[RMDB]
RNA sequence: GGGAACGACUCGAGUAGAGUCGAAAACUCAGUCAAGUCCUCAGACAUUCGUUUUGUGAGCGUCGUAACAAGGACUCGUUCAUCGCGCUCAACACGCUUGUUAAUUCGAUUGAGCAGAUCAUCAACCUGCCCAGUUGCAUCCGCAACCUCAAUUGCAAUCGUCUUACCAUUUCGAUGGUAAGACGAUAAAAGAAACAACAACAACAAC
Reactivity to 2A3 in 0.01 (KOAc 150mM, MgCl2 10mM, bicine 150mM(pH8.5), 24C), signal-to-noise 5, nucleotides 027 to 156: c010u000c000a010g030u020c030a090a060g060u070c030c050u100c060a030g030a060c000a030u060u030c050g060u030u040u110u170g110u050g030a000g000c020g060u150c060g060u200a070a060c060a090a060g140g030a110c090u050c090g050u070u070c030a060u070c050g000c000g000c010u000c010a020a030c040a000c040g030c050u080u030g040u100u090a110a120u210u110c070g030a030u030u000g000a000g010c020a020g030a080u130c020a030u030c000a090a070c020c010u040g040c040c050c010a000g000u010u000g020c020a070u080c070c110g000c000a020a020c000c030u110c060a090a120u080u100g010c030a040
Reactivity to DMS in 0.01 (KOAc 150mM, MgCl2 10mM, bicine 150mM(pH8.5), 24C), signal-to-noise 2, nucleotides 027 to 156: c020u000c020a080g030u000c010a080a050g030u000c010c030u000c060a190g010a040c010a050u010u000c010g050u000u000u000u000g040u000g000a040g000c010g040u000c040g020u000a060a100c110a070a080g000g000a090c040u010c110g010u000u000c070a140u010c050g000c060g090c000u000c070a050a130c170a020c020g000c040u010u000g040u000u000a050a080u000u010c030g010a080u000u000g010a030g010c010a030g010a040u010c060a110u010c160a170a050c040c010u000g000c000c010c010a070g060u000u000g020c060a090u000c070c060g010c030a020a060c040c030u000c080a040a100u000u020g040c050a150